[RMDB]
RNA sequence: GGGAACGACUCGAGUAGAGUCGAAAAGAUAUGGAGUCAGGACAUGUCGAUGUGUCGGAAACGACAUGUCGACAACAGCCUGCUCCUAAGUCAAACGAUUAGCCAUGGUUCGCCAUGGCUAAUCGAACUGUGACAGACGGUUCGCCGUCUGUCACAGAAAAGAAACAACAACAACAAC
Reactivity to DMS in 0.01 (KOAc 150mM, MgCl2 10mM, bicine 150mM(pH8.5), 24C), signal-to-noise 1, nucleotides 027 to 126: g020a050u000a300u000g000g010a000g010u050c000a000g000g000a030c120a170u000g000u000c000g000a000u000g020u010g000u010c000g000g000a040a050a220c010g000a000c010a000u000g000u000c020g010a000c000a000a040c190a150g010c000c000u000g000c000u000c010c000u000a060a050g010u020c010a150a110a180c050g000a010u000u000a020g010c000c010a000u000g000g000u000u020c300g020c020c000a000u000g010g000c000u000a010a000u000c000g010a020a080